[RMDB]
RNA sequence: GGGAACGACUCGAGUAGAGUCGAAAAAUCAACAGUUUGCUCCAUUUUCACUGUAAGUAACCUUCAGGCAUUAGUGUCCAGAUUUAUUAUAACCUUAAGGGUGAUGCGAACUACAAUUGCAGGGUGGGCAGAAGAACUGAUUCGUCAGUUCUUCUGCAAAAGAAACAACAACAACAAC
Reactivity to 2A3 in 0.01 (KOAc 150mM, MgCl2 10mM, bicine 150mM(pH8.5), 24C), signal-to-noise 2, nucleotides 027 to 126: a000u060c010a010a040c020a040g000u040u060u030g040c050u040c010c020a040u080u000u030u090c110a060c040u040g000u080a040a030g100u000a080a050c000c000u040u070c050a000g020g000c020a070u000u050a070g040u020g070u060c030c000a010g040a080u030u080u030a050u100u060a080u060a050a050c020c020u060u050a030a070g170g030g030u010g050a030u120g000c000g040a040a010c020u030a010c060a050a190u050u020g020c020a030g030g050g000u110g000g070
Reactivity to DMS in 0.01 (KOAc 150mM, MgCl2 10mM, bicine 150mM(pH8.5), 24C), signal-to-noise 2, nucleotides 027 to 126: a060u010c050a090a090c110a060g010u010u000u010g030c030u010c020c030a090u000u000u000u010c060a090c070u000g010u000a040a060g000u000a070a070c090c010u010u000c070a070g000g000c000a070u010u000a020g000u020g000u000c090c070a080g000a090u000u000u000a060u040u000a050u000a140a090c030c020u000u000a090a090g010g000g000u010g000a060u000g010c050g010a030a040c060u000a070c120a050a100u000u020g020c040a050g010g010g020u010g010g000